[RMDB]
RNA sequence: GGGAACGACUCGAGUAGAGUCGAAAAUACAAGAAGGGGGGACGGAGAAGGCUUUGUUGGCCGGGCGACGGUUGUCCCGGUUUAAGCGUGUAGGCUGGUUUUCCAGGCAAAUCCGGAAGAAAAUGAAACACAGAAUCUUGUUCGCAAGAUUCUGUGUAAAAGAAACAACAACAACAAC
Reactivity to DMS in 0.01 (KOAc 150mM, MgCl2 10mM, bicine 150mM(pH8.5), 24C), signal-to-noise 1, nucleotides 027 to 126: u000a090c050a140a100g010a080a100g020g000g010g010g000g020a080c130g010g010a070g000a080a060g000g000c020u000u010u010g010u010u000g000g020c020c000g010g000g100c300g000a100c120g030g000u060u020g010u030c010c000c010g040g000u010u000u010a020a050g010c030g030u000g040u010a120g010g000c010u010g020g010u010u000u000u000c010c000a140g000g000c010a030a090a120u000c010c040g060g000a070a080g010a060a040a080a100u010g010a110a080